[RMDB]
Chemical mapping of a 207-nucleotide RNA with 2A3.
The reactions ran in a buffer of 150 mM KOAc, 10 mM MgCl2 and 150 mM bicine (pH 8.5), at 24 C.
RNA sequence: GGGAACGACUCGAGUAGAGUCGAAAAGUUAUGCUCUCGCUGCCUAAUGGCGGUGCGGGAAACCCACUCUAAAGUCCUUAGGGUUAGCCCCUUAAGGCGGGGUUCGGAGGCACCUGGCAACAGAAUCUGAAACUGUGCACAUUCGUGUGCACAGUAACGAUAGCAACCCAUUCGUGGGUUGCUAUCGAAAAGAAACAACAACAACAAC
Reactivity to 2A3 in 0.01 (KOAc 150mM, MgCl2 10mM, bicine 150mM(pH8.5), 24C), signal-to-noise 1, nucleotides 027 to 156: g040u060u060a090u230g070c030u060c020u040c020g010c020u020g000c000c000u300a300a170u260g000g000c010g040g070u040g000c040g010g050g000a110a000a010c000c010c000a030c010u170c090u120a110a170a300g210u040c000c000u000u010a000g010g020g000u100u080a080g080c050c010c000c000u050u020a020a000g000g000c000g000g000g000g000u010u070c050g100g010a020g040g040c040a020c020c000u050g220g000c000a000a000c000a020g040a030a010u010c010u050g010a210a000a000c000u000g000u000g010c000a000c000a020u050u150c160g030u000g000u000g000c000a000c000a000g010u000a000a000